Structure probing data (DMS and 2A3) for a 177-nucleotide construct.
For 2A3 the reverse transcriptase was SuperScript II with manganese.
The 2A3 profile rests on 1,005 reads.
In probing experiments dimethyl sulfate is read out at A N1 and C N3, which are open when not base-paired.
The RNA was probed in 150 mM KOAc, 10 mM MgCl2 and 150 mM bicine (pH 8.5) at 24 C.
RNA sequence: GGGAACGACUCGAGUAGAGUCGAAAAGUUGCGACCUUCGGGUCGCAACAAAUACCGAGGUACAUGCUCGGUAGAAUGUACAAAGCCUUGGAAACAAGGGAAAAAGCUUAACCUUCGGGUUAAGCAACAGGAGCAAAUGAUUCGUCAUUUGCUCCUGAAAAGAAACAACAACAACAAC
Reactivity to DMS in 0.01 (KOAc 150mM, MgCl2 10mM, bicine 150mM(pH8.5), 24C), signal-to-noise 2, nucleotides 027 to 126: g040u000u000g040c000g000a040c000c000u000u010c180g050g000g010u010c000g000c000a000a000c010a050a070a130u020a020c010c010g010a030g000g000u050a120c300a110u000g010c000u000c030g010g000u000a010g000a070a090u000g010u020a120c140a130a110a120g000c010c000u000u020g000g000a190a110a130c010a010a000g030g000g000a000a050a220a140a040g040c000u000u010a010a010c000c000u000u010c230g000g000g010u000u000a010a010g000c010a020a060
Reactivity to 2A3 in 0.01 (KOAc 150mM, MgCl2 10mM, bicine 150mM(pH8.5), 24C), signal-to-noise 1, nucleotides 027 to 126: g000u040u000g010c010g010a000c020c000u000u050c210g060g010g000u000c000g050c000a000a000c020a000a000a000u040a000c000c000g000a000g000g080u200a150c070a210u190g150c040u030c020g020g030u000a010g000a020a110u160g050u120a090c120a010a130a090g090c010c000u000u000g000g010a000a040a010c000a000a020g020g000g000a000a130a000a040a000g000c010u010u000a010a000c000c000u020u070c160g120g020g010u000u010a010a000g000c000a010a010